[RMDB]
RNA sequence: GGGAACGACUCGAGUAGAGUCGAAAAAACUGGGCAGUGACACUUCUCUUGCUAUUGAGUACGAUCGGAGUCAGCUCCUGUCUGUCAAUCUCUUGCAGAAGCACAGCUGUAGUGAUGUUUGACAAGACUCGACAUCGUUGUUCGCAACGAUGUCGAGAAAAGAAACAACAACAACAAC
Reactivity to DMS in 0.01 (KOAc 150mM, MgCl2 10mM, bicine 150mM(pH8.5), 24C), signal-to-noise 2, nucleotides 027 to 126: a060a030c050u000g030g010g030c030a020g010u000g050a110c250a110c020u000u000c020u000c020u000u020g000c080u000a090u010u000g010a060g020u020a080c060g000a070u000c240g030g000a060g020u000c080a170g020c010u000c020c000u000g010u000c050u000g000u010c020a000a000u000c030u000c020u000u010g000c110a010g000a040a010g000c250a060c160a300g020c010u000g000u000a000g010u000g010a040u010g030u000u000u000g010a050c070a090a070g020a020

This 177-nucleotide RNA was probed chemically with DMS. It was measured as part of the RMDB library OK2TRN. The reactions ran in a buffer of 150 mM KOAc, 10 mM MgCl2 and 150 mM bicine (pH 8.5), at 24 C. DMS (dimethyl sulfate) methylates the pairing face of unpaired adenines and cytosines.